An RNA of 177 nucleotides, treated with DMS and 2A3 and read out base by base.
[RMDB]
RNA sequence: GGGAACGACUCGAGUAGAGUCGAAAAAGGCCCUCGCACCGCUCGUGGACCUGCUCGCCCGUCUUGCGGAGAAGGGGAUCUCUCCCCAUGGAUUCCUCCUCUACGUGGUGCUCCCCAGGAUGGAAGGCGUUAAUAGAAAAUUCGUUUUCUAUUAACGAAAAGAAACAACAACAACAAC
Reactivity to DMS in 0.01 (KOAc 150mM, MgCl2 10mM, bicine 150mM(pH8.5), 24C), signal-to-noise 9, nucleotides 027 to 126: a070g010g010c020c000c000u000c060g010c060a110c080c060g010c060u000c050g020u000g010g010a080c040c020u000g010c070u000c080g010c050c010c020g010u000c050u000u000g010c180g010g000a050g010a080a090g010g010g010g000a040u000c050u000c110u010c030c010c020c040a100u010g000g000a080u000u010c010c010u000c030c020u000c030u000a080c070g010u010g010g010u000g000c050u000c020c000c020c040a090g000g000a080u000g010g010a120a090g010g000
Reactivity to 2A3 in 0.01 (KOAc 150mM, MgCl2 10mM, bicine 150mM(pH8.5), 24C), signal-to-noise 8, nucleotides 027 to 126: a000g050g000c000c020c000u000c020g040c010a130c050c050g040c070u060c040g050u060g020g030a060c000c010u030g010c020u040c030g050c000c010c000g030u030c040u060u090g010c040g040g020a030g030a060a060g030g010g000g010a020u020c050u000c040u060c050c000c000c010a050u060g050g000a050u100u090c010c000u020c010c010u020c020u040a060c060g070u120g030g020u050g040c010u030c000c000c000c000a020g060g020a060u090g020g050a050a050g050g000
The DMS profile rests on 47,021 reads.
In probing experiments dimethyl sulfate is read out at A N1 and C N3, which are open when not base-paired.
The reactions ran in a buffer of 150 mM KOAc, 10 mM MgCl2 and 150 mM bicine (pH 8.5), at 24 C.